[RMDB]
RNA sequence: GGGAACGACUCGAGUAGAGUCGAAAAGGCAGGACUUACCAAGUCUGGGGGCCGAUGAGGGUUCGCUCAAAGUAGGGUUUUGACUUGAAAACUCAAGCUGUGACCCCAAAACGAUGGAGGUAAAUGAAAAAUCCAUCUGCCUUCGGGCAGAUGGAAAGUAUCUUUGAUACUUCGGUAUCAAAGAUACAAAAGAAACAACAACAACAAC
Reactivity to 2A3 in 0.01 (KOAc 150mM, MgCl2 10mM, bicine 150mM(pH8.5), 24C), signal-to-noise 2, nucleotides 027 to 156: g030g000c030a010g010g030a010c000u030u070a130c050c040a100a050g020u000c040u060g000g000g000g010g000c020c020g020a030u070g020a050g080g010g000u070u110c020g000c080u050c110a090a110a020g020u090a080g060g030g020u030u040u090u040g080a080c020u030u090g050a030a030a090a050c040u040c020a040a010g010c050u030g050u100g100a040c000c000c010c000a060a060a010a030c070g040a020u090g010g050a080g050g040u100a070a100a110u190g120a100a080a040a000a000u030c000c000a000u000c000u000g010c010c000u010u040c080g040g000g000c000a000g000a000u020g000g000a000a000a000
Reactivity to DMS in 0.01 (KOAc 150mM, MgCl2 10mM, bicine 150mM(pH8.5), 24C), signal-to-noise 1, nucleotides 027 to 156: g010g060c040a070g010g010a070c010u000u030a100c080c000a100a140g000u000c020u000g010g020g010g020g060c020c040g000a150u000g000a100g010g000g040u000u000c070g000c020u000c000a020a080a110g040u000a120g000g020g030u000u000u000u000g010a050c020u010u000g010a040a100a050a120c150u010c000a030a040g020c020u020g020u010g040a080c010c030c000c080a000a060a060a030c030g000a090u010g000g000a120g000g030u010a020a120a040u000g020a000a080a050a100a200u000c010c000a020u000c000u000g020c000c010u000u010c300g060g050g020c000a000g000a050u010g020g000a010a000a030